RNA sequence: GGGAACGACUCGAGUAGAGUCGAAAAGAUAUGGAGAUAUCCGUUGUGACAUCGAUCAGAAUUCGGAAACGAAUUCUGGGAGUCACUGCGGAGUAUCUCCUAAGUCAAACGGUUCUUCGGAACCGAAGUUACAGAUAGGGUUCGCCCUAUCUGUAACAAAAGAAACAACAACAACAAC
Reactivity to DMS in 0.01 (KOAc 150mM, MgCl2 10mM, bicine 150mM(pH8.5), 24C), signal-to-noise 4, nucleotides 027 to 126: g000a040u000a300u000g010g000a030g000a020u000a020u000c000c000g020u010u000g020u000g020a000c010a250u010c150g010a100u010c000a010g010a020a020u000u000c000g010g020a120a140a220c010g010a030a000u000u000c000u000g000g000g000a030g000u000c000a010c000u010g010c000g010g000a020g020u010a000u000c000u000c000c010u000a010a080g000u000c030a150a140a300c010g000g000u000u000c010u000u010c180g040g000a030a000c000c000g000a020a060
Reactivity to 2A3 in 0.01 (KOAc 150mM, MgCl2 10mM, bicine 150mM(pH8.5), 24C), signal-to-noise 4, nucleotides 027 to 126: g030a040u090a050u200g000g020a010g010a000u010a010u000c010c020g010u020u030g000u000g000a040c050a300u250c140g160a170u140c030a010g000a000a000u000u010c000g010g040a050a100a090c000g000a020a010u000u000c000u000g000g020g010a030g010u000c000a010c000u000g000c020g000g000a010g010u020a000u000c000u000c010c010u000a020a020g030u010c040a080a060a100c030g000g000u010u010c000u050u070c230g170g000a000a000c000c000g020a080a020